[RMDB]
RNA sequence: GGGAACGACUCGAGUAGAGUCGAAAACGGAAGCAUUAAAACCAUUCUAGCUAGUCAAUGCGUGGCGUGUCUCUCCGCAGCGUGUUGGCGAAUGUAAAGAGUGACUAAGCAUGUAGUACCGAGGAUGAUAAGAGCAAUUCGUUCGCGAAUUGCUCAAGCCUAAAAUAAGCUUCGGCUUAUUUUAGGCAAAAGAAACAACAACAACAAC
Reactivity to 2A3 in 0.01 (KOAc 150mM, MgCl2 10mM, bicine 150mM(pH8.5), 24C), signal-to-noise 5, nucleotides 027 to 156: c030g020g040a060a020g020c030a060u100u130a050a050a020a070c030c000a010u030u030c020u050a050g030c020u030a030g010u010c000a000a010u010g010c010g010u030g070g000c020g010u070g090u040c050u020c020u010c110c010g000c000a010g010c010g000u010g030u000u000g010g000c000g000a030a020u130g040u090a040a060a030g030a020g010u010g020a030c040u050a060a010g060c050a040u080g020u070a050g050u030a080c040c050g030a060g080g000a050u120g020a040u170a250a090g000a000g000c000a000a000u000u000c000g030u020u030c080g010c000g100a000a000u000u000g010c000u000c000a000a000
Reactivity to DMS in 0.01 (KOAc 150mM, MgCl2 10mM, bicine 150mM(pH8.5), 24C), signal-to-noise 2, nucleotides 027 to 156: c040g000g010a160a140g010c020a080u000u000a090a070a100a120c070c010a070u000u000c020u000a300g040c040u010a150g010u000c020a040a020u000g010c000g040u000g020g080c040g000u000g000u010c130u000c050u000c190c020g020c000a060g000c030g000u000g010u000u000g010g010c020g000a050a070u010g020u000a030a090a050g000a050g020u010g010a080c070u000a070a170g000c090a070u000g030u010a100g010u000a120c020c000g010a140g000g020a140u000g010a160u000a090a110g010a040g000c000a020a030u000u010c000g050u000u010c240g040c040g010a010a020u000u010g000c010u000c000a000a040